[RMDB]
RNA sequence: GGGAACGACUCGAGUAGAGUCGAAAAAGUACUGAUCUACCAUGAGACCAUGCUAGCAUGUGCCAUGCGAUCGUGCCAUGACUAGCAGAUAGACCAUGGAUCAGACUAGCGAUCCGAUCCUAUCAUGGAGUUCGAGAAGGUUCGCCUUCUCGAACUCAAAAGAAACAACAACAACAAC
Reactivity to 2A3 in 0.01 (KOAc 150mM, MgCl2 10mM, bicine 150mM(pH8.5), 24C), signal-to-noise 2, nucleotides 027 to 126: a000g120u120a220c020u020g000a030u080c000u060a080c030c040a010u020g030a000g070a140c070c040a080u030g000c040u000a000g020c000a040u070g100u300g090c130c020a090u180g120c180g090a100u280c040g080u120g030c010c000a040u050g060a300c010u000a010g000c000a010g000a000u010a010g050a020c050c050a000u020g020g000a000u000c000a000g060a000c020u050a000g050c010g070a000u000c080c030g010a040u020c010c060u170a180u210c030a090u170g090
Reactivity to DMS in 0.01 (KOAc 150mM, MgCl2 10mM, bicine 150mM(pH8.5), 24C), signal-to-noise 2, nucleotides 027 to 126: a090g000u000a070c020u010g000a050u000c060u020a200c070c010a030u000g020a110g000a130c090c210a080u000g000c000u000a000g020c010a000u000g000u010g030c000c030a120u000g040c300g020a110u000c140g020u010g030c060c000a010u000g020a090c020u000a000g000c000a000g020a080u010a050g000a210c090c080a030u000g020g010a090u000c020a010g000a050c020u010a110g010c070g000a050u010c060c010g010a100u000c020c060u000a120u010c110a110u000g010

The data come from the RNA Mapping Database (RMDB), library OK2TRN.
This 177-nucleotide RNA was probed chemically with 2A3 and DMS.
The 2A3 profile rests on 1,252 reads.
Values are in units of 0.01, from 0 to 300, in steps of 10.
The reactions ran in a buffer of 150 mM KOAc, 10 mM MgCl2 and 150 mM bicine (pH 8.5), at 24 C.
The DMS profile rests on 825 reads.
For DMS the reverse transcriptase was MarathonRT.